The record gives the reactivity of an RNA of 177 nucleotides to DMS and 2A3.
The RNA was probed in 150 mM KOAc, 10 mM MgCl2 and 150 mM bicine (pH 8.5) at 24 C.
For 2A3, 4,431 sequencing reads were counted.
The DMS profile rests on 8,985 reads.
It was measured as part of the RMDB library OK1LIB.
For 2A3 the reverse transcriptase was SuperScript II with manganese.

RNA sequence: GGGAACGACUCGAGUAGAGUCGAAAAUCGUGGGUGGUUUGCCAAAACCGUCACGUACUGCUGCGGAAACUUAUAAUAAUAGUUGCAAUAUUGCUGGUACUCCGUCGGUACGGGUUGCUGGAGUGCUAUGCUAUGGAUAUUUCGAUAUCCAUAGCAUAAAAGAAACAACAACAACAAC
Reactivity to DMS in 0.01 (KOAc 150mM, MgCl2 10mM, bicine 150mM(pH8.5), 24C), signal-to-noise 4, nucleotides 027 to 126: u010c060g060u010g000g000g030u030g030g020u000u010u000g020c140c220a050a010a020a020c020c020g030u010c020a070c020g000u000a040c050u000g000c280u010g010c000g000g000a080a060a030c020u010u010a080u030a140a050u020a080a090u010a040g010u010u040g020c080a080a090u020a070u020u010g020c040u000g000g010u020a060c100u000c000c010g000u010c060g000g020u000a020c040g000g000g030u010u010g020c030u000g000g000a100g000u010g000c070u000
Reactivity to 2A3 in 0.01 (KOAc 150mM, MgCl2 10mM, bicine 150mM(pH8.5), 24C), signal-to-noise 5, nucleotides 027 to 126: u120c030g010u120g010g020g070u130g000g050u020u010u120g220c070c040a060a030a010a010c020c020g070u060c010a010c040g010u020a030c020u020g070c040u050g000c000g040g000a030a030a040c050u100u140a080u070a300a150u180a080a070u090a100g090u090u090g010c030a050a120u080a150u240u100g040c040u050g060g020u020a060c010u010c000c000g050u050c040g000g000u020a010c020g000g060g000u050u070g020c050u030g010g010a050g020u060g020c010u000